[RMDB]
RNA sequence: GGGAACGACUCGAGUAGAGUCGAAAACGUGCGAUACGUGCUGGGACACCACAGCGUGAACGGCACCACUCAUGAUGGGACAGCGGAGUAUAUCAUCACAACUUGGCCGCUGUUGCGGGUCAAGGGCCAGGUGCAGCAGUUUCGACUGCUGCACCUGAAAAGAAACAACAACAACAAC
Reactivity to 2A3 in 0.01 (KOAc 150mM, MgCl2 10mM, bicine 150mM(pH8.5), 24C), signal-to-noise 1, nucleotides 027 to 126: c020g040u100g000c040g030a020u050a100c020g000u040g020c000u010g030g060g170a020c030a030c060c040a060c030a080g070c050g050u000g000a040a050c020g060g000c010a040c010c000a040c030u080c020a050u090g090a040u080g010g050g000a010c010a030g020c060g070g090a060g090u070a050u030a010u290c070a010u090c020a010c010a200a080c020u000u000g050g010c000c020g030c030u090g080u190u190g000c050g060g060g080u020c010a030a010g060g000g060c020
Reactivity to DMS in 0.01 (KOAc 150mM, MgCl2 10mM, bicine 150mM(pH8.5), 24C), signal-to-noise 1, nucleotides 027 to 126: c050g000u000g040c100g050a050u000a070c150g020u000g030c020u000g020g000g000a230c100a020c110c050a100c070a100g000c110g000u010g020a100a110c090g040g000c060a060c010c100a100c080u020c050a090u020g000a040u000g000g000g010a060c100a090g040c060g010g000a130g000u010a170u010a090u010c030a030u000c130a060c190a060a100c040u000u000g000g000c000c000g000c000u000g000u000u000g030c030g010g010g000u000c000a070a020g000g020g010c220